[RMDB]
RNA sequence: GGGAACGACUCGAGUAGAGUCGAAAAGAUUCGGCGGCCCUGUCAUGAGGCCGAAACGAAGGCACGUACCCCUUCGAAUGGCGUCGGGGAGUCAGCGGCGAUAUAUGCGCCUAAUGCUGGCAUCCGGGAGAACCCUCAUCCUUCGGGAUGAGGGUAACACUUUUUACGUGUUCGCACGUAAAAAGUGAAAAGAAACAACAACAACAAC
Reactivity to 2A3 in 0.01 (KOAc 150mM, MgCl2 10mM, bicine 150mM(pH8.5), 24C), signal-to-noise 1, nucleotides 027 to 156: g050a100u140u170c130g060g020c040g000g000c030c000c020u000g050u010c010a010u050g020a030g000g020c000c060g020a040a000a000c010g000a010a000g010g030c090a010c190g140u230a140c010c000c000c060u000u000c010g020a040a020u030g030g000c010g210u040c010g010g000g000g020a130g020u020c000a000g000c010g010g010c010g020a010u040a010u070a020u300g070c020g020c000c010u160a220a050u300g010c010u000g000g040c040a030u000c030c010g000g020g000a200g020a000a030c010c000c000u000c000a000u000c000c000u070u050c160g070g010g010a000u000g000a010g000g010g010u000a000a000
Reactivity to DMS in 0.01 (KOAc 150mM, MgCl2 10mM, bicine 150mM(pH8.5), 24C), signal-to-noise 1, nucleotides 027 to 156: g010a240u000u000c090g000g000c000g000g060c000c030c020u000g050u020c230a130u020g000a050g040g030c000c000g000a000a050a040c040g000a040a050g010g000c070a140c050g000u010a300c030c020c000c030u030u000c000g030a160a130u000g010g000c040g030u010c030g050g010g010g000a090g010u010c040a070g090c000g020g050c000g040a190u020a130u010a060u000g000c010g000c000c010u000a040a080u020g000c010u000g040g010c010a050u010c000c010g000g010g020a150g010a140a080c000c000c020u000c010a010u010c000c000u000u010c290g040g000g000a000u000g010a020g000g010g000u000a000a060